[RMDB]
RNA sequence: GGGAACGACUCGAGUAGAGUCGAAAACAGUAUGCUAUGAAAAGGCUACUUGAGGCGGGUCUGGACUAUUUUAGUCGCGAAUACCACUCAUCGGUUCGUUUUAGAGUGUUGUCGACCGCAUGAAGACCAUACGACCAUGUUUCGACAUGGUCGUAUGAAAAGAAACAACAACAACAAC
Reactivity to 2A3 in 0.01 (KOAc 150mM, MgCl2 10mM, bicine 150mM(pH8.5), 24C), signal-to-noise 1, nucleotides 027 to 126: c050a020g060u140a070u290g060c040u050a040u260g180a080a090a000a020g000g000c000u000a000c000u020u030g060a050g070g000c080g030g090g010u020c030u120g080g000a020c020u000a140u150u290u060u070a050g000u010c000g000c030g180a040a040u140a100c020c030a010c030u070c000a030u020c040g170g030u160u060c010g020u000u040u020u010a100g000a060g020u050g020u090u050g070u050c030g000a070c000c000g000c050a050u100g030a050a010g000a030c000
Reactivity to DMS in 0.01 (KOAc 150mM, MgCl2 10mM, bicine 150mM(pH8.5), 24C), signal-to-noise 4, nucleotides 027 to 126: c150a050g020u000a050u010g040c030u000a080u000g020a070a100a200a200g000g010c000u000a010c000u000u000g020a120g000g010c060g010g010g000u000c020u010g020g000a020c020u000a060u000u000u010u010a010g010u000c020g020c080g000a070a040u000a100c060c020a110c040u000c010a070u010c050g010g010u010u000c090g020u000u000u000u000a100g010a070g010u000g000u010u000g010u000c040g000a130c020c120g010c110a050u010g000a060a090g010a130c150